[RMDB]
RNA sequence: GGGAACGACUCGAGUAGAGUCGAAAACAACCAGUCUUGCUGACGAUAUUACCAAGAUCGCACGGGAUAACGAGCUCAUCACUCCUACAGGACGGAUCGCAGAAGCAUACCCAAAGGCUAAAGAAGCGCUCCAGCUUAUGCGCGAUUAUGCCGGGUACAACGUAGAUCGAUUCGUCGAUCUACGUUGAAAAGAAACAACAACAACAAC
Reactivity to 2A3 in 0.01 (KOAc 150mM, MgCl2 10mM, bicine 150mM(pH8.5), 24C), signal-to-noise 4, nucleotides 027 to 156: c050a010a020c020c030a030g040u010c030u050u120g030c040u050g050a080c030g020a040u020a050u080u140a150c060c060a120a070g060a120u050c030g010c020a030c050g040g010g030a030u060a120a060c090g000a020g010c040u040c020a060u070c020a060c040u070c010c010u100a070c050a070g000g040a030c030g030g000a040u060c060g020c040a010g030a110a020g030c040a020u050a080c000c020c000a120a060a050g010g000c000u030a060a080a030g110a130a030g010c010g000c010u060c040c040a110g050c050u160u170a080u240g010c010g000c000g010a020u030u050a030u180g030c010c010g000g000g020u000a030
Reactivity to DMS in 0.01 (KOAc 150mM, MgCl2 10mM, bicine 150mM(pH8.5), 24C), signal-to-noise 2, nucleotides 027 to 156: c070a080a280c040c000a180g010u030c020u000u000g050c020u000g040a180c020g000a050u020a190u000u000a080c070c050a070a090g030a050u010c040g030c090a070c070g000g030g060a110u000a110a060c060g030a050g040c030u010c230a110u010c040a070c040u000c010c000u020a040c070a070g020g000a050c050g040g000a040u000c030g050c030a080g020a050a070g020c050a110u010a070c010c000c040a100a080a180g010g030c030u020a050a100a080g000a130a140g010c040g000c020u010c030c040a270g010c070u000u000a030u000g020c060g020c030g000a130u020u000a080u030g010c000c000g010g000g020u000a100
The data come from the RNA Mapping Database (RMDB), library OK3TST. Structure probing data (2A3 and DMS) for a 207-nucleotide construct. 2A3 adducts were read by reverse transcription with SuperScript II with manganese. Reactivities are given for positions 27 through 156. DMS adducts were read by reverse transcription with MarathonRT.